[RMDB]
RNA sequence: GGGAACGACUCGAGUAGAGUCGAAAAGAUAUGGAAUGUACUAUCCGUCGGUACUUGGACCUCGGAAACGAGCUAGUACCUACGGACGAAUACAUUCCUAAGUCAAACCUCGCGUUCGCGCGAGGAACCCAUUAGGCAUCUUCGGAUGCCUAAUGGGAAAAGAAACAACAACAACAAC
Reactivity to 2A3 in 0.01 (KOAc 150mM, MgCl2 10mM, bicine 150mM(pH8.5), 24C), signal-to-noise 2, nucleotides 027 to 126: g040a010u040a020u140g020g000a000a000u000g010u020a030c090u050a090u030c010c010g020u000c020g000g000u000a000c000u020u100g170g060a230c060c000u000c010g050g000a090a080a080c020g010a030g020c010u010a000g000u010a000c030c010u010a010c020g000g010a010c000g040a080a250u020a010c000a000u000u000c000c020u000a100a010g030u000c040a080a010a250c020c000u010c000g010c020g020u030u050c290g010c000g000c020g180a000g000g010a010a020
Reactivity to DMS in 0.01 (KOAc 150mM, MgCl2 10mM, bicine 150mM(pH8.5), 24C), signal-to-noise 1, nucleotides 027 to 126: g030a050u020a300u000g010g000a010a000u010g000u010a020c060u030a210u000c000c000g020u000c090g000g000u000a000c000u020u000g090g030a090c300c000u010c000g000g000a160a050a180c000g010a020g020c030u000a000g050u000a000c000c000u000a010c010g000g000a000c090g040a030a080u000a000c010a010u000u000c000c000u000a050a090g000u000c000a140a050a160c000c000u030c010g000c000g010u000u020c220g030c020g000c000g000a000g000g000a030a050
The record gives the reactivity of an RNA of 177 nucleotides to 2A3 and DMS. For DMS the reverse transcriptase was MarathonRT. The RNA was probed in 150 mM KOAc, 10 mM MgCl2 and 150 mM bicine (pH 8.5) at 24 C. It was measured as part of the RMDB library TTRDEL. Reactivities are given for positions 27 through 126. The DMS profile rests on 676 reads.